RNA sequence: GGGAACGACUCGAGUAGAGUCGAAAAAAACGUGCUUUCGCGGUGUGUAUCGAGAGGGACCAAACGGUUUCAACGUGCCAUUCGGCCACUACAAAAAUCCCCAAAUCUUUGAGGAAAAGCAUCUCGUCAAAGUCUCCAGGCUUCUGCAGCCAGUAAACAGUGAAUAACUAUUCGUAGUUAUUCACUGAAAAGAAACAACAACAACAAC
Reactivity to 2A3 in 0.01 (KOAc 150mM, MgCl2 10mM, bicine 150mM(pH8.5), 24C), signal-to-noise 6, nucleotides 027 to 156: a000a000a010c060g020u050g010c020u030u060u090c050g010c030g060g000u030g000u020g010u030a080u120c080g010a060g030a070g070g020g010a040c030c030a110a120a080c090g030g000u040u070u090c060a080a050c050g040u070g010c000c020a080u140u120c010g020g000c040c040a040c040u120a050c100a020a170a040a010a030u050c000c020c010c010a030a100a080u060c060u050u060u110g040a060g000g040a020a080a040a020g050c020a050u030c030u010c050g110u030c040a050a040a030g020u020c020u000c050c050a040g000g010c010u060u050c060u230g070c030a030g010c000c010a020g040u100a030a100a010
Reactivity to DMS in 0.01 (KOAc 150mM, MgCl2 10mM, bicine 150mM(pH8.5), 24C), signal-to-noise 2, nucleotides 027 to 156: a040a030a030c050g020u000g010c050u000u000u000c040g030c050g000g010u010g010u000g020u000a060u000c030g010a140g000a090g000g020g010a060c010c010a080a060a050c120g010g000u010u000u000c060a100a100c130g010u000g020c020c000a190u010u000c030g010g010c010c010a060c010u010a100c070a030a110a080a130a160u000c010c000c000c030a030a070a080u010c110u010u010u010g000a060g020g000a060a070a040a090g000c030a080u010c030u000c020g010u000c030a070a040a140g000u000c010u000c020c010a160g020g020c020u010u010c080u010g010c070a080g000c020c020a120g010u000a070a050a150
Structure probing data (2A3 and DMS) for a 207-nucleotide construct. For DMS, 5,310 sequencing reads were counted. The RNA was probed in 150 mM KOAc, 10 mM MgCl2 and 150 mM bicine (pH 8.5) at 24 C. Reactivities are given for positions 27 through 156.